This 177-nucleotide RNA was probed chemically with DMS.
[RMDB]
RNA sequence: GGGAACGACUCGAGUAGAGUCGAAAAGGCAUCCAAUAUUAUGAACAAGUACUGGGAUAAACCCUAUUUUAGCCAGACUAGAAACAUUAGCCUGAAAGGGAUGUCAGGUUCACUGCAAGAAGAUGGAUCCCGAUUUACCAUUCGUGGUAAAUCGGGAAAAAGAAACAACAACAACAAC
Reactivity to DMS in 0.01 (KOAc 150mM, MgCl2 10mM, bicine 150mM(pH8.5), 24C), signal-to-noise 1, nucleotides 027 to 126: g000g010c010a040u010c010c000a000a110u000a030u000u000a030u000g010a070a050c150a080a060g010u000a050c050u000g000g000g010a080u010a100a080a110c090c030c090u000a110u070u010u000u000a040g000c080c010a070g000a070c010u000a030g010a220a010a080c150a000u000u000a000g020c000c000u020g000a120a070a100g000g030g050a030u000g020u000c000a030g020g000u000u000c050a160c060u010g040c130a080a070g000a060a000g020a110u000g000g010a260

Reactivities are given for positions 27 through 126.
For DMS the reverse transcriptase was MarathonRT.